[RMDB]
RNA sequence: GGGAACGACUCGAGUAGAGUCGAAAAGAUAUGGAGCCAUCGACAUGCUCGACAUAUCGGAAACGAUAUCAAGAGCAACAGCGAGUGGCUCCUAAGUCAAAGCUGGUGCUCUUCGGAGCACCAGCAAGAUCACACACUGGUUCGCCAGUGUGUGAUCAAAAGAAACAACAACAACAAC
Reactivity to DMS in 0.01 (KOAc 150mM, MgCl2 10mM, bicine 150mM(pH8.5), 24C), signal-to-noise 2, nucleotides 027 to 126: g000a020u000a290u020g010g010a000g050c000c010a040u020c000g010a090c080a190u000g010c000u000c020g000a300c300a000u000a000u010c000g000g000a010a050a110c000g000a040u020a010u000c000a060a300g010a000g000c010a040a030c150a110g000c000g020a050g020u010g010g000c010u000c000c000u000a010a020g000u020c030a090a120a240g050c000u000g000g000u000g020c010u010c000u000u020c240g040g010a020g020c000a020c000c000a000g000c000a000a000
Reactivity to 2A3 in 0.01 (KOAc 150mM, MgCl2 10mM, bicine 150mM(pH8.5), 24C), signal-to-noise 2, nucleotides 027 to 126: g010a000u050a070u120g000g010a000g040c000c000a000u020c010g070a130c090a240u300g020c020u010c000g020a030c020a020u000a000u020c020g000g000a020a010a010c010g000a000u000a000u010c090a120a140g000a010g030c070a140a050c030a050g010c000g070a240g240u060g000g000c010u050c010c000u010a010a000g010u000c020a060a060a030g000c010u010g060g010u030g000c000u010c010u130u220c300g160g000a020g000c010a000c000c000a000g000c010a000a000

Structure probing data (DMS and 2A3) for a 177-nucleotide construct. It was measured as part of the RMDB library TTRDEL.